[RMDB]
RNA sequence: GGGAACGACUCGAGUAGAGUCGAAAAUGGUGUAAAUAAUUGGAAUAAGCAUCUUGCUUAUCGACCGGCACAGACCAAUCAAGCAGGUGACUGGCAGUUAGGCAAUGGAUUGGUUGUUCCAAUGCCGGACCAUAGACACCUUCGGGUGUCUAUGGUCAAAAGAAACAACAACAACAAC
Reactivity to DMS in 0.01 (KOAc 150mM, MgCl2 10mM, bicine 150mM(pH8.5), 24C), signal-to-noise 2, nucleotides 027 to 126: u010g020g010u010g020u000a050a130a110u000a140a080u000u030g000g020a060a020u000a020a020g030c000a120u000c090u000u000g000c000u000u000a020u000c030g010a110c020c010g000g010c000a050c070a050g020a070c080c090a070a050u010c170a060a220g020c160a050g010g000u020g000a010c000u000g000g000c300a040g000u010u000a060g000g010c020a050a080u020g010g000a020u000u000g000g010u000u010g050u010u000c040c010a060a070u000g020c020c000g010
Chemical mapping of a 177-nucleotide RNA with DMS. It was measured as part of the RMDB library OK2TRN.